[RMDB]
RNA sequence: GGGAACGACUCGAGUAGAGUCGAAAAUAAAAGUCGAAAGUAUUGCUAUAGUUAAGGUUGCGCUUGCCUAUUUAGGCAUACUUCUCAGGAUGGCACGUUGCAGUCCAACAAGAUCCAGGGACUGUACAAAACAGGCUCGUGUUCGCACGAGCCUGAAGAUUCAUGAAAUCUUCGGAUUUCAUGAAUCAAAAGAAACAACAACAACAAC
Reactivity to DMS in 0.01 (KOAc 150mM, MgCl2 10mM, bicine 150mM(pH8.5), 24C), signal-to-noise 1, nucleotides 027 to 156: u000a060a030a110a020g040u000c020g000a160a050a100g040u010a050u000u000g000c010u000a090u000a110g010u000u000a120a110g000g010u000u000g030c230g030c080u010u010g010c040c000u010a190u000u010u000a070g000g020c020a070u000a030c010u000u000c030u000c040a080g040g010a130u010g000g000c000a080c110g000u010u010g040c000a040g050u000c030c010a060a090c080a090a150g000a050u010c090c070a170g020g000g010a010c020u000g030u010a050c090a020a010a120a160c010a000g000g000c020u020c000g140u010g050u000u000c300g000c050a080c000g000a050g000c000c000u010g000a010a050
Reactivity to 2A3 in 0.01 (KOAc 150mM, MgCl2 10mM, bicine 150mM(pH8.5), 24C), signal-to-noise 2, nucleotides 027 to 156: u120a000a050a030a000g040u060c020g030a060a030a000g010u020a040u060u210g010c040u070a050u080a180g040u110u070a090a030g000g040u030u060g090c090g000c080u050u060g020c020c000u130a150u090u210u120a050g010g000c010a000u020a010c020u050u030c020u010c110a040g070g020a060u060g050g060c040a010c110g030u060u040g000c010a000g000u000c020c000a020a020c020a110a080g050a110u080c060c040a030g000g000g010a000c000u010g010u030a020c030a000a090a030a030c010a000g000g000c000u000c000g000u000g040u020u050c130g000c070a000c030g000a000g000c000c000u000g000a010a000